[RMDB]
RNA sequence: GGGAACGACUCGAGUAGAGUCGAAAAUCAUCAGAUGAACACGCGGACGAGUAUUCGCGUUAUAUCGUAGACGGGGCGGCGGUUGCUGAAAUGAAAGGAAUCAUUGAACGCCAUCAGGCCAAAUGAUCCUCUCCGUAGUAUUCGUACUACGGAGAGGAAAAGAAACAACAACAACAAC
Reactivity to DMS in 0.01 (KOAc 150mM, MgCl2 10mM, bicine 150mM(pH8.5), 24C), signal-to-noise 2, nucleotides 027 to 126: u070c000a070u000c020a300g000a060u000g010a070a080c300a030c000g000c000g030g000a030c110g000a170g000u040a200u000u000c020g000c010g020u000u000a140u010a000u000c020g000u030a060g000a090c030g030g000g000g000c030g000g020c040g000g060u000u030g020c120u000g000a060a120a000u000g000a060a050a140g000g000a140a090u000c080a040u000u000g000a100a150c200g020c020c000a030u050c150a090g000g010c000c070a110a000a000u030g000a070u000
Reactivity to 2A3 in 0.01 (KOAc 150mM, MgCl2 10mM, bicine 150mM(pH8.5), 24C), signal-to-noise 3, nucleotides 027 to 126: u040c000a000u010c030a010g010a060u050g070a030a020c010a000c060g010c010g020g000a030c090g130a060g120u230a130u050u050c020g000c000g000u010u050a090u010a000u000c000g020u010a010g020a020c020g000g010g000g000c030g040g000c040g020g040u010u080g000c060u040g060a040a050a090u060g050a120a050a050g130g090a040a020u050c000a020u010u060g070a050a010c040g030c030c000a060u110c060a020g000g020c000c000a020a030a060u120g010a050u030

An RNA of 177 nucleotides, treated with DMS and 2A3 and read out base by base.
For DMS, 2,011 sequencing reads were counted.
Conditions: 150 mM KOAc, 10 mM MgCl2 and 150 mM bicine (pH 8.5), 24 C.